[RMDB]
RNA sequence: GGGAACGACUCGAGUAGAGUCGAAAAACGGGCUAGUGUCGCAAGACCGGUAGCAAUACCGACAGAGGUCAUAUACGUCAGUUAAGCCUGUCCGGCGUCACGACGGCCAGGUCGAAAAUUGAGUGAAUCGCCGUAACGGAGCGUGUUCGUCCGCGACCACCCCAUUGUAGUUCGCUACAAUGGGGUGAAAAGAAACAACAACAACAAC
Reactivity to 2A3 in 0.01 (KOAc 150mM, MgCl2 10mM, bicine 150mM(pH8.5), 24C), signal-to-noise 3, nucleotides 027 to 156: a000c010g000g010g000c030u010a040g020u030g030u170c020g050c050a110a000g050a020c090c010g000g000u020a000g020c050a000a120u030a040c030c000g060a050c110a040g180a050g040g080u080c060a010u090a000u010a120c070g080u030c020a050g010u030u090a080a030g000c000c000u010g000u000c000c020g000g040c050g050u080c070a040c160g020a010c000g010g020c000c010a030g020g020u110c040g040a040a040a100a080u110u150g010a000g060u070g070a050a050u150c070g010c010c000g040u030a040a040c040g060g030a020g030c050g010u060g050u040u050c020g020u030c010c020g060c030g010a020c010
Reactivity to DMS in 0.01 (KOAc 150mM, MgCl2 10mM, bicine 150mM(pH8.5), 24C), signal-to-noise 2, nucleotides 027 to 156: a030c030g020g040g050c000u020a040g020u020g010u000c010g030c060a160a150g000a060c090c020g000g010u020a060g000c220a180a080u000a030c040c000g000a060c030a270g010a160g020g000u000c030a090u010a150u000a070c060g000u020c020a010g040u010u000a090a250g000c000c000u020g010u000c010c000g020g000c020g060u000c190a150c040g000a060c020g020g000c020c010a000g020g000u010c040g000a080a060a040a100u000u000g000a140g000u000g010a050a090u000c030g030c020c010g000u000a080a190c080g010g000a180g030c000g070u020g020u000u000c070g020u000c000c020g050c020g000a110c070